[RMDB]
RNA sequence: GGGAACGACUCGAGUAGAGUCGAAAACUGCUGCAAACACUUUAUUUCAGCUAAUGGGAAAGGUGGUAGCAAAUUAAAGGUUAUACCAAUAUAGUCUAAUUUAGGGAUGAUGCCCUUGCCCAGAGCCACUUAUCAGUACGUUCGCGUACUGAUAAGUAAAAGAAACAACAACAACAAC
Reactivity to 2A3 in 0.01 (KOAc 150mM, MgCl2 10mM, bicine 150mM(pH8.5), 24C), signal-to-noise 5, nucleotides 027 to 126: c020u030g030c020u030g040c040a050a260a050c020a060c050u060u090u190a280u090u170u030c010a010g000c050u200a150a110u060g030g000g000a030a060a020g020g000u030g010g000u030a010g000c000a030a060a050u140u110a120a070a010g050g000u040u040a050u040a110c050c030a090a010u120a010u030a080g020u000c020u050a090a140u060u120u140a050g000g060g000a040u110g030a030u130g150c000c000c000u000u040g030c010c020c010a030g030a020g070c030c040
Reactivity to DMS in 0.01 (KOAc 150mM, MgCl2 10mM, bicine 150mM(pH8.5), 24C), signal-to-noise 7, nucleotides 027 to 126: c120u000g010c070u000g010c080a080a070a300c050a030c040u000u000u000a130u030u010u000c010a050g020c150u010a070a110u010g000g000g000a040a030a040g010g030u000g010g000u000a160g000c020a040a070a090u010u010a060a090a090g000g000u010u000a060u000a160c100c070a060a090u000a070u010a070g000u000c050u000a060a100u000u000u000a070g010g000g010a100u010g010a110u000g010c030c000c020u000u000g000c010c010c010a080g000a100g010c140c160
An RNA of 177 nucleotides, treated with 2A3 and DMS and read out base by base. Reactivities are given for positions 27 through 126. The RNA was probed in 150 mM KOAc, 10 mM MgCl2 and 150 mM bicine (pH 8.5) at 24 C.